RNA sequence: GGGAACGACUCGAGUAGAGUCGAAAAAUGGGGAGCUGGCCAGGCUGUGAGGGACGGAGCAGAGUUGGCUUGUGGCUCCUUGUGGCCCCCUCCAGCAGCUUCCUCCUCACAGUCUGCACAGCUCUCCUAAGUUACAAUCCUUCGGGAUUGUAACUUAAAAAGAAACAACAACAACAAC
Reactivity to 2A3 in 0.01 (KOAc 150mM, MgCl2 10mM, bicine 150mM(pH8.5), 24C), signal-to-noise 7, nucleotides 027 to 126: a010u080g000g000g000g000a000g010c000u000g010g010c070c010a000g010g010c000u000g010u000g000a010g010g020g020a040c090g000g010a000g000c030a030g040a020g170u000u010g030g030c100u030u050g050u110g020g000c020u130c080c050u020u170g040u090g010g000c000c000c000c000c000u000c000c000a010g000c000a010g000c000u090u040c000c010u010c000c000u010c000a000c000a000g000u000c000u000g000c000a000c000a000g000c000u000c000u000c000c000
Reactivity to DMS in 0.01 (KOAc 150mM, MgCl2 10mM, bicine 150mM(pH8.5), 24C), signal-to-noise 4, nucleotides 027 to 126: a050u020g020g000g000g010a010g000c000u000g010g000c290c030a020g000g010c010u000g000u000g000a010g000g000g000a060c260g000g000a060g000c000a150g010a120g030u000u000g000g020c230u000u000g000u040g010g000c010u030c020c170u020u010g010u040g000g010c020c000c020c070c170u010c000c000a020g010c000a080g000c000u000u000c010c030u030c000c000u000c000a000c010a000g010u000c000u000g000c170a050c010a010g000c010u000c000u000c010c000